[RMDB]
RNA sequence: GGGAACGACUCGAGUAGAGUCGAAAAAUGGUAGUUAGUCUACUCGCUAUCCUAGUUACAUUGGAGUAAUCUAAAGUGUGUGUAAACGGGCGAAAGUCUGUAAAAUACUGGGGACAUAGGGUCAACAAGAACUAGUAGACCUUCGGGUCUACUAGAACAGUAUGAGCUAGUUCGCUAGCUCAUACUGAAAAGAAACAACAACAACAAC
Reactivity to 2A3 in 0.01 (KOAc 150mM, MgCl2 10mM, bicine 150mM(pH8.5), 24C), signal-to-noise 4, nucleotides 027 to 156: a000u070g040g010u030a020g020u070u100a050g060u040c040u020a030c010u010c040g020c020u050a050u100c000c010u040a040g030u080u100a040c040a070u040u080g060g020a030g020u070a050a090u020c030u060a040a080a080g020u030g000u010g000u010g030u090a070a090a060c030g000g010g010c030g030a070a040a020g010u020c010u050g070u090a030a090a030a000u110a050c020u020g010g010g010g000a010c010a040u100a050g080g000g010u030c020a030a030c030a130a030g060a040a030c000u000a000g010u000a000g000a000c000c000u020u030c130g050g000g000u000c000u000a000c000u000a000g000a000a000
Reactivity to DMS in 0.01 (KOAc 150mM, MgCl2 10mM, bicine 150mM(pH8.5), 24C), signal-to-noise 3, nucleotides 027 to 156: a090u000g010g020u010a010g000u010u000a080g020u000c020u000a040c010u010c030g020c040u000a070u000c010c030u000a090g010u010u020a070c030a170u000u000g020g010a160g010u010a080a080u010c030u000a060a050a150g010u000g050u010g020u000g010u010a020a100a080c080g030g030g040c010g000a130a080a140g040u000c020u010g000u000a050a060a050a070u020a070c060u000g010g000g030g020a100c050a070u000a060g010g010g000u000c050a050a060c040a030a120g010a130a140c000u000a030g010u000a020g000a010c000c010u010u000c290g050g030g040u000c000u010a000c000u010a020g020a040a110